[RMDB]
RNA sequence: GGGAACGACUCGAGUAGAGUCGAAAAGGCGUCGAUGCCAUCAUCAUCUGCUGCUCGAACGUGACGGCCAUCAACCAGACGAUCGAAUACGCGCAUUCCAAGGGCGUUCCGGUUUUCUCCUUCUCGGGUUACGUGACAUCGCCCUACGCGAUCAAUGCAUAUGUAGGCAGUUCGCUGCCUACAUAUGAAAAGAAACAACAACAACAAC
Reactivity to DMS in 0.01 (KOAc 150mM, MgCl2 10mM, bicine 150mM(pH8.5), 24C), signal-to-noise 2, nucleotides 027 to 156: g030g000c030g000u000c020g020a140u000g020c040c000a060u020c020a070u000c060a070u000c070u000g020c050u020g040c050u010c040g000a070a130c080g020u020g030a080c040g020g000c030c050a090u000c050a080a080c050c010a150g010a110c060g010a000u000c050g010a060a060u010a110c060g010c020g000c050a080u000u000c130c110a110a120g030g010g020c020g010u010u000c030c010g020g020u000u010u000u010c020u010c020c030u000u010c050u000c060g000g000g010u000u010a060c040g020u010g000a060c100a060u000c030g020c030c020c050u000a020c050g020c000g010a080u000c050a110a200u010g020
Reactivity to 2A3 in 0.01 (KOAc 150mM, MgCl2 10mM, bicine 150mM(pH8.5), 24C), signal-to-noise 4, nucleotides 027 to 156: g050g010c050g000u120c100g090a060u150g030c070c010a050u060c010a010u020c000a030u010c040u110g030c010u040g000c020u040c060g050a120a020c040g040u050g060a060c060g040g000c060c010a100u080c040a020a080c040c020a030g030a090c030g040a000u060c040g040a070a020u150a170c040g010c000g030c080a050u160u070c040c020a080a040g010g030g000c010g010u040u010c010c000g010g000u010u040u060u050c050u130c010c010u170u150c080u080c160g030g010g000u060u040a030c050g020u070g020a030c030a150u040c030g010c010c020c000u030a040c070g010c010g010a010u070c050a050a040u150g030